The record gives the reactivity of an RNA of 177 nucleotides to DMS and 2A3.

RNA sequence: GGGAACGACUCGAGUAGAGUCGAAAAGCUGCUUCUUCUUGUUCUCGAGGGCUUUCCUUCUUCGGUGAGCCCGCCUCUCCUCGUCGGUGAAGUCUCCCGCGCGGGUCCUCUUCCUAGGUCCGGAAUCGCUAUGGUAAUACUUCGGUAUUACCAUAGCAAAAGAAACAACAACAACAAC
Reactivity to DMS in 0.01 (KOAc 150mM, MgCl2 10mM, bicine 150mM(pH8.5), 24C), signal-to-noise 1, nucleotides 027 to 126: g020c050u010g000c030u000u010c040u000u010c030u000u000g000u010u010c000u000c040g000a110g010g020g020c020u000u000u000c030c010u000u000c170u010u010c180g010g010u010g000a030g000c010c010c000g020c070c050u000c020u010c030c020u000c040g010u010c070g020g010u010g000a060a120g010u000c040u000c040c000c060g010c080g000c050g000g000g000u000c010c010u000c050u000u000c020c020u000a100g000g000u010c050c040g000g010a080a090u000c130
Reactivity to 2A3 in 0.01 (KOAc 150mM, MgCl2 10mM, bicine 150mM(pH8.5), 24C), signal-to-noise 2, nucleotides 027 to 126: g030c030u030g020c010u050u010c000u070u030c010u020u130g050u110u030c020u030c030g060a120g010g020g000c000u010u040u040c000c000u070u120c060u150u120c070g050g000u030g020a010g010c030c000c000g000c010c020u010c000u020c020c010u000c010g120u000c030g050g080u050g030a060a000g050u030c020u000c030c000c000g000c030g040c020g020g040g000u030c000c010u000c000u030u040c000c000u020a040g050g020u000c010c020g000g070a070a030u110c040
For DMS the reverse transcriptase was MarathonRT. For 2A3 the reverse transcriptase was SuperScript II with manganese. Reactivities are given for positions 27 through 126.